[RMDB]
RNA sequence: GGGAACGACUCGAGUAGAGUCGAAAAACAGUAAAAACUAUCGGCUGUCUGAAUUAUAGCGCUCGGUUACAGAUCUGCCGUUCCAAGCCCCGAUUUCUCCGUACCGAGGGCAGUCGAGCGAAGACAGGAUCGUGAGCAGUUUCGACUGCUCACGAUCAAAAGAAACAACAACAACAAC
Reactivity to 2A3 in 0.01 (KOAc 150mM, MgCl2 10mM, bicine 150mM(pH8.5), 24C), signal-to-noise 1, nucleotides 027 to 126: a000c030a000g030u140a000a110a090a030a000c050u090a060u150c060g010g020c010u020g070u000c010u070g070a160a120u300u300a130u300a050g060c000g000c000u000c000g030g050u030u000a080c090a080g030a050u070c020u070g000c000c000g030u050u040c010c010a010a000g070c000c000c000c010g000a000u070u030u000c070u000c000c050g110u030a020c020c030g000a100g000g000g000c000a000g020u020c000g000a000g110c050g070a160a040g080a040c030a040g170